An RNA of 207 nucleotides, treated with 2A3 and DMS and read out base by base. DMS adducts were read by reverse transcription with MarathonRT. 2A3 adducts were read by reverse transcription with SuperScript II with manganese. It was measured as part of the RMDB library ARCHII.

RNA sequence: GGGAACGACUCGAGUAGAGUCGAAAAAUUCUGGCCGAGGAACAAAUCCUUCCUCGCGGCUGGAUUGCACGCCCUUUGGGCAAGGGGUGGUUUUCUACUCCGCACCGUGCCCUGUUGUGGCAACCGCCUUUUCCCUGUCGUAAAUUUGUCCUGGGCACAUAUCUCGUAUGUUCGCAUACGAGAUAUGAAAAGAAACAACAACAACAAC
Reactivity to 2A3 in 0.01 (KOAc 150mM, MgCl2 10mM, bicine 150mM(pH8.5), 24C), signal-to-noise 3, nucleotides 027 to 156: a000u050u010c010u020g030g000c020c000g000a010g010g020a020a040c040a100a240a190u100c010c020u020u000c000c000u020c030g080c050g020g000c000u010g000g030a020u000u150g040c110a030c050g030c000c000c000u050u140u040g020g000g020c020a030a030g020g000g000g010u020g020g000u030u090u100u080c030u060a070c050u000c010c010g010c020a040c020c020g020u020g000c010c000c010u020g040u060u040g000u050g010g020c020a030a030c050c010g030c010c000u060u030u030u040c000c010c020u030g070u080c070g040u100a050a140a240u110u070u080g040u010c020c050u030g010g010g000c030a010
Reactivity to DMS in 0.01 (KOAc 150mM, MgCl2 10mM, bicine 150mM(pH8.5), 24C), signal-to-noise 2, nucleotides 027 to 156: a070u010u000c030u000g030g040c020c010g010a030g030g020a070a300c040a070a150a100u000c090c290u000u000c000c000u000c010g020c050g080g080c000u000g000g010a040u010u000g020c100a110c100g000c020c010c010u000u010u000g020g050g020c040a020a030g010g030g020g040u000g020g020u000u000u000u000c130u010a110c080u000c010c030g000c020a050c030c020g010u000g020c000c010c000u000g000u000u000g010u000g030g000c010a080a060c060c020g050c030c030u000u000u010u020c010c020c020u010g000u000c070g000u000a050a050a110u000u000u000g010u010c020c030u000g010g020g020c050a300